Chemical mapping of a 207-nucleotide RNA with DMS and 2A3. The RNA was probed in 150 mM KOAc, 10 mM MgCl2 and 150 mM bicine (pH 8.5) at 24 C. For 2A3 the reverse transcriptase was SuperScript II with manganese. DMS adducts were read by reverse transcription with MarathonRT. For DMS, 3,249 sequencing reads were counted.
[RMDB]
RNA sequence: GGGAACGACUCGAGUAGAGUCGAAAAGCACAACCGUGAGCACUGGAAGCACCUGUAUUUCGGUGCGACACCGUUCAUGGACCCGGCCGUGCAGCCGAUCAAGGCGUGGCUGCUGCCCGGCAACACGCGCACGAUCAUCACGACGACCGGGUUCAUCCAAAUCCUAGAGUUUCGACUCUAGGAUUUGAAAAGAAACAACAACAACAAC
Reactivity to DMS in 0.01 (KOAc 150mM, MgCl2 10mM, bicine 150mM(pH8.5), 24C), signal-to-noise 2, nucleotides 027 to 156: g040c050a150c060a040a230c120c030g000u000g010a300g010c020a010c020u010g010g020a080a140g000c040a210c120c100u030g030u000a140u000u000u010c020g020g010u000g000c010g000a160c010a160c000c040g020u000u000c060a110u010g030g000a030c000c000c020g030g000c040c010g020u020g010c070a200g030c080c080g020a050u000c020a110a280g010g030c020g030u000g020g020c090u000g000c050u000g020c070c060c110g000g050c000a030a000c020a020c040g020c000g080c050a300c260g000a030u000c000a100u000c080a060c000g010a090c000g000a030c000c010g020g000g030u000u000c010a020u000c050
Reactivity to 2A3 in 0.01 (KOAc 150mM, MgCl2 10mM, bicine 150mM(pH8.5), 24C), signal-to-noise 2, nucleotides 027 to 156: g070c020a040c020a150a000c030c040g000u020g000a000g020c000a010c030u050g010g020a030a010g030c040a170c160c160u170g100u250a260u030u060u040c030g000g010u030g010c000g040a010c000a010c010c020g070u110u070c020a030u020g010g000a000c010c000c000g000g000c000c010g000u020g030c050a040g090c090c110g010a000u020c050a130a150g110g010c010g000u010g010g020c120u020g000c000u070g030c030c040c010g030g000c000a010a000c020a010c010g030c040g070c020a030c110g010a010u000c010a010u050c020a000c010g060a010c030g050a070c000c000g010g030g000u000u000c000a000u000c000